[RMDB]
RNA sequence: GGGAACGACUCGAGUAGAGUCGAAAAACGACUUGGUAAUAUUCAAGCUCAACAGACCAAAUCACAGGUCUUCCUCUCUGGAUCCACUCCUCUGGGAUUGAUUUGUAUGCCGAUUUUCCCGCUGAACCCACAUGAUAACGUUCGCGUUAUCAUGUGGAAAAGAAACAACAACAACAAC
Reactivity to 2A3 in 0.01 (KOAc 150mM, MgCl2 10mM, bicine 150mM(pH8.5), 24C), signal-to-noise 1, nucleotides 027 to 126: a000c090g050a000c010u000u030g090g040u110a220a080u040a230u260u120c010a040a010g000c020u010c030a050a050c050a050g020a050c010c000a070a080a090u200c030a070c030a100g040g000u030c000u030u020c000c000u040c020u000c030u050g040g000a020u000c000c030a070c060u030c030c000u010c040u090g020g050g000a030u000u060g020a030u050u080u130g110u060a060u120g050c020c000g040a000u000u000u030u040c000c020c090g030c000u050g020a020a010c000
Reactivity to DMS in 0.01 (KOAc 150mM, MgCl2 10mM, bicine 150mM(pH8.5), 24C), signal-to-noise 1, nucleotides 027 to 126: a090c140g010a060c060u010u010g000g060u010a040a070u010a070u000u000c020a020a080g010c050u000c060a070a190c150a060g000a090c040c020a040a030a160u000c070a110c190a090g010g000u000c010u000u010c040c030u010c060u010c030u030g000g000a080u000c100c060a040c070u000c010c030u000c060u000g030g000g020a040u010u010g000a030u000u010u010g010u000a080u000g030c080c030g000a130u000u000u000u000c000c000c010g030c090u010g000a120a100c140
The record gives the reactivity of an RNA of 177 nucleotides to 2A3 and DMS. 2A3 adducts were read by reverse transcription with SuperScript II with manganese. DMS adducts were read by reverse transcription with MarathonRT. It was measured as part of the RMDB library RFMREP. The reactions ran in a buffer of 150 mM KOAc, 10 mM MgCl2 and 150 mM bicine (pH 8.5), at 24 C.